The data come from the RNA Mapping Database (RMDB), library RFMREP. Chemical mapping of a 177-nucleotide RNA with 2A3 and DMS. The RNA was probed in 150 mM KOAc, 10 mM MgCl2 and 150 mM bicine (pH 8.5) at 24 C.
RNA sequence: GGGAACGACUCGAGUAGAGUCGAAAACCAUGGGAGGAUACCGGAGAUCGAUAUGACGGCAGCAGUGCCUUGGCGCUUCUGCACGAUUGCGCGGCCCGCGACCCCCGGGGUGCUGCGUCCAUCAACCGCUAAUAAGUCAGUUCGCUGACUUAUUAGCAAAAGAAACAACAACAACAAC
Reactivity to 2A3 in 0.01 (KOAc 150mM, MgCl2 10mM, bicine 150mM(pH8.5), 24C), signal-to-noise 1, nucleotides 027 to 126: c010c010a040u150g040g010g000a160g060g000a070u050a110c010c000g000g010a040g000a050u070c040g020a020u010a050u260g090a070c030g040g000c000a010g000c000a000g020u010g000c000c000u020u150g080g060c020g010c000u030u000c010u020g010c040a070c090g040a040u010u140g020c040g010c010g050g020c010c000c000g060c040g050a140c000c000c000c000c000g020g000g000g060u070g000c050u030g000c000g040u040c030c010a040u030c010a010a050c020c070
Reactivity to DMS in 0.01 (KOAc 150mM, MgCl2 10mM, bicine 150mM(pH8.5), 24C), signal-to-noise 3, nucleotides 027 to 126: c010c000a140u020g000g000g000a060g000g000a080u010a090c100c010g020g010a070g000a050u000c040g010a150u000a070u020g010a110c220g000g010c040a030g010c070a020g020u000g010c020c030u010u000g050g020c010g020c020u010u000c010u000g000c020a070c030g010a090u000u000g010c070g000c030g000g010c010c020c030g010c060g000a290c090c010c020c030c010g010g000g010g020u010g010c030u010g010c030g000u000c050c060a070u000c090a050a130c200c150
For DMS, 2,391 sequencing reads were counted.